Conditions: 150 mM KOAc, 10 mM MgCl2 and 150 mM bicine (pH 8.5), 24 C. The record gives the reactivity of an RNA of 177 nucleotides to 2A3 and DMS. Values cover nucleotides 27 to 126. The data come from the RNA Mapping Database (RMDB), library 15KREP.
RNA sequence: GGGAACGACUCGAGUAGAGUCGAAAAUGGUGGGAUUGUGGCAUUAAUUUGCCUGCUCAUCUAGGCAGUGGACAUAUGCUCAACACUGGGUAUAAUUCUAAUUGAAUACUAUUUUUCAGUUAGAGCGCUAGAUAUUUGUCUUCGGACAAAUAUCUAGAAAAGAAACAACAACAACAAC
Reactivity to 2A3 in 0.01 (KOAc 150mM, MgCl2 10mM, bicine 150mM(pH8.5), 24C), signal-to-noise 2, nucleotides 027 to 126: u110g010g000u030g010g040g000a030u160u160g080u070g120g010c010a010u050u050a070a080u040u090u010g000c000c010u000g000c010u010c000a010u000c000u010a020g030g040c020a030g020u030g040g020a020c010a070u180a030u150g030c050u010c010a050a070c050a020c070u030g000g020g030u100a070u070a140a150u040u000c010u030a030a040u030u030g000a010a000u030a090c040u070a290u170u250u020u020u000c010a000g010u000u000a000g010a010g000c050g000
Reactivity to DMS in 0.01 (KOAc 150mM, MgCl2 10mM, bicine 150mM(pH8.5), 24C), signal-to-noise 3, nucleotides 027 to 126: u000g020g040u000g000g000g000a030u010u010g030u000g020g010c010a010u000u000a070a170u020u000u000g020c000c000u000g000c010u010c020a010u000c010u010a090g000g010c020a040g010u000g010g010a100c120a130u000a040u000g000c040u010c060a040a160c150a080c080u000g010g000g020u000a050u010a080a140u010u010c010u010a010a010u000u010g010a010a040u010a070c230u010a110u000u010u010u010u000c010a010g000u000u000a050g010a030g010c300g000